An RNA of 207 nucleotides, treated with 2A3 and read out base by base.

[RMDB]
RNA sequence: GGGAACGACUCGAGUAGAGUCGAAAAAUCACUAGCCCCUUUCGUGGCUUCUGCUUUACGUUCUGCCACAGCAAUACUGGCGGCUGCUUUCUCUUCGGUAUGGUGCUGCUCGGCUUUGGCUUCUGCCUUGCUUGUUCCGCGUGCAUGGCCGAUGCCGGGUGACUCAUAAUUUCGAUUAUGAGUCACCAAAAGAAACAACAACAACAAC
Reactivity to 2A3 in 0.01 (KOAc 150mM, MgCl2 10mM, bicine 150mM(pH8.5), 24C), signal-to-noise 2, nucleotides 027 to 156: a020u120c060a080c160u090a060g000c030c000c000c000u000u160u170c130g050u040g020g000c000u090u120c080u110g030c030u090u160u180a060c060g100u090u000c070u050g000c000c010a040c030a030g040c020a000a090u030a140c030u030g010g030c080g020g010c040u110g070c010u070u100u080c070u010c000u090u080c070g030g010u040a050u070g030g080u030g060c030u000g050c030u010c040g000g000c030u110u040u080g010g000c020u040u020c020u060g030c010c000u030u000g050c000u100u270g040u210u050c060c070g010c020g010u040g020c000a020u070g030g010c000c000g030a010u050g010c000c000g000
For 2A3, 844 sequencing reads were counted. It was measured as part of the RMDB library OK3TST.